[RMDB]
The record gives the reactivity of an RNA of 207 nucleotides to DMS and 2A3. DMS (dimethyl sulfate) methylates the pairing face of unpaired adenines and cytosines. Reactivities are given for positions 27 through 156. The reactions ran in a buffer of 150 mM KOAc, 10 mM MgCl2 and 150 mM bicine (pH 8.5), at 24 C. For 2A3, 10,417 sequencing reads were counted.

RNA sequence: GGGAACGACUCGAGUAGAGUCGAAAAACUGCCAUACGUGGCAGAAACACGCCUUACCAGGACUAAACAGCGUGUCUAAAAAACAGUCCUUCAUACCUGAUCUGCAGGGUAGAUCAGGAAUACUAAAAAAAUCGGGUGAAGUUCGCUUCACCCGAAACGUAAACAGUAUGUUCGCAUACUGUUUACGAAAAGAAACAACAACAACAAC
Reactivity to DMS in 0.01 (KOAc 150mM, MgCl2 10mM, bicine 150mM(pH8.5), 24C), signal-to-noise 2, nucleotides 027 to 156: a060c010u000g000c000c000a070u000a050c090g040u000g030g000c000a020g000a150a170a020c000a010c020g010c020c010u000u000a030c090c050a060g040g030a040c020u000a100a060a060c040a020g000c010g040u000g030u010c120u000a010a030a030a070a030a050c110a050g010u000c010c000u000u010c080a140u000a090c000c010u030g000a040u010c020u000g030c060a240g050g040g040u000a020g000a020u000c000a030g020g010a030a040u010a140c110u000a000a000a070a130a100a050a160u000c000g000g040g020u000g010a050a030g010u010u010c300g030c010u000u000c000a010c010c000c000g000a000a000a020
Reactivity to 2A3 in 0.01 (KOAc 150mM, MgCl2 10mM, bicine 150mM(pH8.5), 24C), signal-to-noise 5, nucleotides 027 to 156: a000c000u000g000c000c000a030u030a070c200g060u040g000g000c000a000g020a000a020a000c000a000c000g010c000c010u020u050a020c020c060a010g000g010a010c000u050a110a030a030c010a010g000c000g010u010g020u020c120u050a010a010a010a000a000a000c030a000g000u000c020c000u020u110c080a090u060a140c000c000u000g010a000u010c000u020g010c050a120g100g010g090u040a010g000a000u010c000a000g000g030a000a010u090a060c080u130a030a010a010a000a030a020a130u040c000g000g000g000u010g000a000a000g020u040u140c170g040c090u000u000c000a000c000c000c000g000a000a000a000